The record gives the reactivity of an RNA of 207 nucleotides to 2A3 and DMS. Reactivities are given for positions 27 through 156. The RNA was probed in 150 mM KOAc, 10 mM MgCl2 and 150 mM bicine (pH 8.5) at 24 C. For 2A3 the reverse transcriptase was SuperScript II with manganese.
RNA sequence: GGGAACGACUCGAGUAGAGUCGAAAAUGGACUAAUGUUGCGAUGAAGGACGAAGGCUAGAGGAUCGAAAUCGAUUAGAUACCGUUUUAGUUCUAGCAGUAAACGAUGCCGACUGGACGGGACAGUGUGUGUUGUCCAUGAGAAAUCUUGAGUAUGCGACUCUAUUCAGGUUCGCCUGAAUAGAGUCAAAAGAAACAACAACAACAAC
Reactivity to 2A3 in 0.01 (KOAc 150mM, MgCl2 10mM, bicine 150mM(pH8.5), 24C), signal-to-noise 2, nucleotides 027 to 156: u120g040g040a020c100u070a090a040u070g060u140u040g050c020g050a010u020g020a090a020g030g020a000c050g030a100a020g070g000c020u030a020g020a050g050g020a020u040c050g010a020a020a000u120c020g050a060u040u050a050g020a050u080a120c030c010g000u010u040u060u020a040g010u080u000c000u020a000g000c020a010g010u180a050a030a010c030g070a030u070g030c010c030g030a040c010u040g000g000a010c040g010g000g030a020c020a110g010u020g000u000g020u010g030u090u030g010u010c000c010a060u070g050a000g090a120a130a060u070c070u070u000g020a000g050u070a060u110g050c040
Reactivity to DMS in 0.01 (KOAc 150mM, MgCl2 10mM, bicine 150mM(pH8.5), 24C), signal-to-noise 2, nucleotides 027 to 156: u000g020g020a090c050u000a100a110u000g010u000u000g020c010g010a050u000g000a060a110g010g000a070c030g040a120a110g020g000c020u010a070g030a080g000g010a080u010c050g010a100a070a130u000c040g000a080u000u000a150g040a190u010a050c030c010g010u000u000u000u000a090g030u000u000c000u000a040g050c000a100g020u000a060a070a140c090g000a150u000g000c020c060g010a060c060u010g020g030a070c060g030g010g000a040c000a050g020u000g020u010g010u000g030u000u000g000u010c000c020a130u010g000a060g000a070a080a060u000c040u000u020g010a190g000u000a160u000g040c190